[RMDB]
RNA sequence: GGGAACGACUCGAGUAGAGUCGAAAAAGGUGGCAAUCGCCCGCGAACGCGCCCGCGAAGUUGCAUCUCGGCUAAAUGUGCCAGACUCACGCGAGUGAGCUACGCCGGAGAUAUCACGCCACUUCAGAUCCACCGUCGAUUUCGAUCGACGGUGGAUAAAAGAAACAACAACAACAAC
Reactivity to DMS in 0.01 (KOAc 150mM, MgCl2 10mM, bicine 150mM(pH8.5), 24C), signal-to-noise 1, nucleotides 027 to 126: a060g000g000u000g010g000c000a290a000u030c010g000c000c070c150g080c000g000a080a110c120g000c000g010c000c040c110g010c100g040a160a000g000u000u010g020c070a020u000c040u000c090g000g010c000u030a000a270a200u000g090u000g000c070c080a110g000a090c000u000c000a130c000g040c300g000a150g050u010g000a190g000c000u000a250c060g000c030c020g160g000a040g000a010u000a180u050c090a140c300g050c000c000a000c000u000u000c010a090g040
Reactivity to 2A3 in 0.01 (KOAc 150mM, MgCl2 10mM, bicine 150mM(pH8.5), 24C), signal-to-noise 2, nucleotides 027 to 126: a010g100g000u000g000g000c020a080a080u000c000g010c020c020c000g000c000g000a020a020c050g000c000g010c000c000c000g020c000g010a130a000g130u150u050g050c090a110u000c090u170c140g000g050c020u070a190a180a000u300g120u200g040c010c000a070g000a150c010u010c010a020c010g030c000g000a030g010u040g070a030g000c000u070a070c010g000c000c010g000g000a020g010a000u130a030u130c100a120c120g010c000c000a000c000u020u020c000a100g040
Record summary
Structure probing data (DMS and 2A3) for a 177-nucleotide construct. 2A3 adducts were read by reverse transcription with SuperScript II with manganese. The DMS profile rests on 812 reads. The 2A3 profile rests on 832 reads. The RNA was probed in 150 mM KOAc, 10 mM MgCl2 and 150 mM bicine (pH 8.5) at 24 C. Source: RMDB library OK1LIB, as collected in RNAgym.